[RMDB]
RNA sequence: GGGAACGACUCGAGUAGAGUCGAAAAGCUCUGAGAGACAGAUCGAACAACAAAGAGAGAUCGAAAAUCUUAGGGGAGAGAACGAAUCUUUCGUCUUCUCUAGGACAUUGUCGAUCAGAUGUCCAAAGACCAUUCAAUGGUUCGCCAUUGAAUGGUCAAAAGAAACAACAACAACAAC
Reactivity to DMS in 0.01 (KOAc 150mM, MgCl2 10mM, bicine 150mM(pH8.5), 24C), signal-to-noise 2, nucleotides 027 to 126: g000c000u000c000u000g070a000g010a230g000a020c000a110g000a020u010c000g000a300a190c000a050a180c260a100a080a090g000a050g000a300g000a020u000c000g000a150a090a080a190u000c020u010u000a040g000g070g000g000a000g000a070g020a120a020c010g000a080a060u020c230u000u000u000c000g000u000c000u000u010c000u000c000u000a010g020g050a020c150a100u050u030g000u000c010g020a180u010c000a000g000a010u010g000u000c000c000a020a020a120
Reactivity to 2A3 in 0.01 (KOAc 150mM, MgCl2 10mM, bicine 150mM(pH8.5), 24C), signal-to-noise 3, nucleotides 027 to 126: g000c000u000c000u000g020a010g000a010g000a010c020a030g000a000u010c010g030a060a040c040a080a010c020a040a300a010g080a020g000a000g000a030u000c020g000a010a050a030a060u000c000u000u000a010g000g000g000g000a000g000a000g040a080a020c020g020a050a060u150c090u030u050u020c010g070u010c000u000u020c010u000c000u000a000g000g020a000c030a120u040u140g010u020c010g000a000u000c000a000g010a040u080g030u000c000c000a010a010a030

Notes:
The record gives the reactivity of an RNA of 177 nucleotides to DMS and 2A3. The 2A3 profile rests on 4,303 reads. DMS adducts were read by reverse transcription with MarathonRT. The RNA was probed in 150 mM KOAc, 10 mM MgCl2 and 150 mM bicine (pH 8.5) at 24 C. The DMS profile rests on 2,107 reads. The data come from the RNA Mapping Database (RMDB), library OK1LIB. 2A3 adducts were read by reverse transcription with SuperScript II with manganese.